[RMDB]
RNA sequence: GGGAACGACUCGAGUAGAGUCGAAAAGUGCGACAUUUCGAUGUCGCACAAACCCAAAUGGUGGCACCUAACUAAACAAGGCGGGAAAAGCCAGAUGCCAACGUCCUUAGCCCUUCGGGGCUAAGAAGUAUAGUGUUCAGUUCGCUGAACACUAUACAAAAGAAACAACAACAACAAC
Reactivity to 2A3 in 0.01 (KOAc 150mM, MgCl2 10mM, bicine 150mM(pH8.5), 24C), signal-to-noise 6, nucleotides 027 to 126: g000u000g000c010g000a000c000a000u040u070u120c240g110a030u020g010u010c000g030c000a000c000a000a000a010c020c000c010a030a090a030u140g020g010u020g020g000c020a050c040c010u090a150a110c060u120a130a070a090c110a160a060g020g000c030g020g100g060a080a220a010a000g000c000c010a020g030a040u070g020c010c020a050a020c040g090u110c000c010u000u000a000g000c000c000c010u020u040c250g040g000g000g000c000u000a000a000g000a000a000
Reactivity to DMS in 0.01 (KOAc 150mM, MgCl2 10mM, bicine 150mM(pH8.5), 24C), signal-to-noise 5, nucleotides 027 to 126: g020u000g000c010g010a010c000a020u000u000u020c180g010a000u000g010u000c000g020c000a000c010a010a070a110c000c000c010a100a100a090u010g000g020u000g010g010c020a020c010c010u010a100a130c140u020a080a100a100c120a060a040g000g000c040g010g000g010a060a070a060a120g010c020c010a030g010a030u000g000c000c020a030a030c070g000u000c070c000u010u000a000g010c000c000c000u000u010c210g020g000g010g010c000u000a010a000g000a050a090